[RMDB]
RNA sequence: GGGAACGACUCGAGUAGAGUCGAAAAAGAGGGGAAGAGUGAGGCUUAUCCCGGGGAACCCGGCGAAUGCCCCCACAUAGCAGAGUCCGGGACCCCCUCCUAAAAGACCGAGGGGGGGUGCUUGGAGUAACCACAUUGUUCGCAAUGUGGAAAAGAAACAACAACAACAAC
Reactivity to DMS in 0.01 (KOAc 150mM, MgCl2 10mM, bicine 150mM(pH8.5), 24C), signal-to-noise 9, nucleotides 027 to 129: a050g000a070g000g000g010g010a010a020g000a040g030u000g020a000g010g000c080u000u040a070u010c120c030c040g020g010g020g020a090a120c050c000c020g000g000c040g010a140a080u020g000c000c000c030c030c050a070c160a050u020a070g030c050a060g020a170g010u000c000c020g000g000g000a140c000c000c010c000c030u010c020c040u000a030a090a110a100g030a090c180c160g030a020g020g010g000g000g020g000g030u030g020c050u000u010g000g000a090g000u020a070a120
Reactivity to 2A3 in 0.01 (KOAc 150mM, MgCl2 10mM, bicine 150mM(pH8.5), 24C), signal-to-noise 9, nucleotides 027 to 129: a000g050a030g010g010g000g010a020a010g040a020g090u130g050a030g020g000c000u050u090a080u090c010c010c010g010g010g010g010a050a070c010c000c000g000g000c010g040a080a040u090g010c010c000c000c010c000a110c040a080u140a010g060c040a010g030a010g130u030c010c000g000g020g010a030c010c000c000c000c000u050c000c000u100a150a160a050a020g080a050c100c090g020a120g010g000g000g000g000g000g010u050g110c030u020u100g010g000a040g030u050a040a030
Source information
Chemical mapping of a 170-nucleotide RNA with DMS and 2A3. The data come from the RNA Mapping Database (RMDB), library 15KLIB. The DMS profile rests on 88,226 reads.